The record gives the reactivity of an RNA of 207 nucleotides to 2A3 and DMS.
The RNA was probed in 150 mM KOAc, 10 mM MgCl2 and 150 mM bicine (pH 8.5) at 24 C.
[RMDB]
RNA sequence: GGGAACGACUCGAGUAGAGUCGAAAAGGCGAUUCGUCGCCCGCGCCGAUAUGGAAACAAGAGGUGACGGGAGCAUCAAGGGAUCGGAAACGAUCCCUGUGCGAGGAUCGUCACUCCCCACCUUGUUUCCUAAGUCUUAUACGCUGUUCGCAGCGAACAUUGCUGUUAGCUUCGGCUAACAGCAAUGAAAAGAAACAACAACAACAAC
Reactivity to 2A3 in 0.01 (KOAc 150mM, MgCl2 10mM, bicine 150mM(pH8.5), 24C), signal-to-noise 3, nucleotides 027 to 156: g010g000c010g010a020u110u130c200g080u040c010g170c020c020c000g130c030g020c010c040g050a110u080a040u220g010g000a010a000a000c000a030a000g020a010g090g030u010g000a010c020g000g000g010a010g010c020a010u100c220a130a070g010g020g000a010u010c010g010g020a040a040a020c000g000a010u000c000c000c010u010g000u010g010c000g010a190g020g030a020u030c000g000u000c000a000c040u100c010c010c000c010a050c010c000u000u000g000u000u000u000c010c010u020a040a010g000u000c040u130u220a160u060a220c040g010c010u020g030u060u090c220g000c120a010g000c000g020a020a010
Reactivity to DMS in 0.01 (KOAc 150mM, MgCl2 10mM, bicine 150mM(pH8.5), 24C), signal-to-noise 2, nucleotides 027 to 156: g010g020c010g010a070u000u010c180g030u000c010g000c000c000c000g000c100g010c040c030g010a130u000a130u000g030g020a030a010a030c000a030a020g010a300g040g030u020g010a050c030g000g040g000a160g030c020a020u000c030a140a050g030g100g010a020u010c010g010g000a100a110a230c010g030a010u000c000c000c030u000g010u000g010c010g020a120g020g000a050u000c020g020u010c040a010c030u000c080c060c040c030a260c090c010u000u010g010u000u000u000c010c000u000a040a080g000u000c110u010u000a170u000a180c050g010c010u010g040u000u010c090g000c090a060g000c000g020a140a220